Structure probing data (2A3) for a 207-nucleotide construct. For 2A3, 1,338 sequencing reads were counted. The reactions ran in a buffer of 150 mM KOAc, 10 mM MgCl2 and 150 mM bicine (pH 8.5), at 24 C. The data come from the RNA Mapping Database (RMDB), library M2RFOK.
RNA sequence: GGGAACGACUCGAGUAGAGUCGAAAAAGAGCCGGAUACGUCCGGCUCAACGGGGGUUACGUGUGGUGCCGUCCGCUCCCCCUAUGGCAUAACAAAUGCACCACACACUAGGCUACGGCCUAGUGAAAAAAUCCCUACAUGUUCGCAUGUAGGGAAAGCUGUAUGUUUUGUUCGCAAAACAUACAGCAAAAGAAACAACAACAACAAC
Reactivity to 2A3 in 0.01 (KOAc 150mM, MgCl2 10mM, bicine 150mM(pH8.5), 24C), signal-to-noise 2, nucleotides 027 to 156: a020g010a000g000c010c000g030g000a020u030a020c150g060u010c010c000g000g020c000u010c000a000a000c000g010g000g000g000g000u000u080a030c020g010u050g000u000g030g000u000g000c000c030g010u020c030c060g040c030u100c000c000c000c000c030u070a130u210g070g000c050a050u080a190a030c090a080a060a020u100g000c000a000c010c000a000c010a000c010a000c000u000a000g000g000c000u020a000c210g090g000c000c010u000a000g000u010g060a080a010a000a000a000a010u010c000c000c000u000a000c000a000u020g030u050u050c130g000c110a000u000g000u000a000g000g000g000a050a020a000